[RMDB]
Chemical mapping of a 177-nucleotide RNA with 2A3. 2A3 adducts were read by reverse transcription with SuperScript II with manganese. It was measured as part of the RMDB library RFM100.
RNA sequence: GGGAACGACUCGAGUAGAGUCGAAAAACUUUUAAUUUCUCUCUCUUUUGAUAUCUUCUUUUCUCGAUCUCCUAGCUUGAUCUUUUGAUCUCUCAAAUCGAUCUUAAGAAAAAGAUCAGUCAAAGAGCGACCAGAGGAAAUUCGUUUCCUCUGGUCGAAAAGAAACAACAACAACAAC
Reactivity to 2A3 in 0.01 (KOAc 150mM, MgCl2 10mM, bicine 150mM(pH8.5), 24C), signal-to-noise 1, nucleotides 027 to 126: a000c030u080u200u110u280a120a110u050u120u000c010u020c000u000c010u000c000u120u090u050u020g020a030u010a060u180c070u080u000c010u040u040u080u040c010u010c040g150a140u010c050u050c020c050u030a100g000c110u000u110g020a010u050c000u070u080u030u120g030a020u000c010u000c010u010c070a160a110a000u140c050g000a010u000c000u020u060a120a030g110a140a010a020a000a000g010a000u010c020a000g060u000c010a080a050a030g070a010g000

The RNA was probed in 150 mM KOAc, 10 mM MgCl2 and 150 mM bicine (pH 8.5) at 24 C.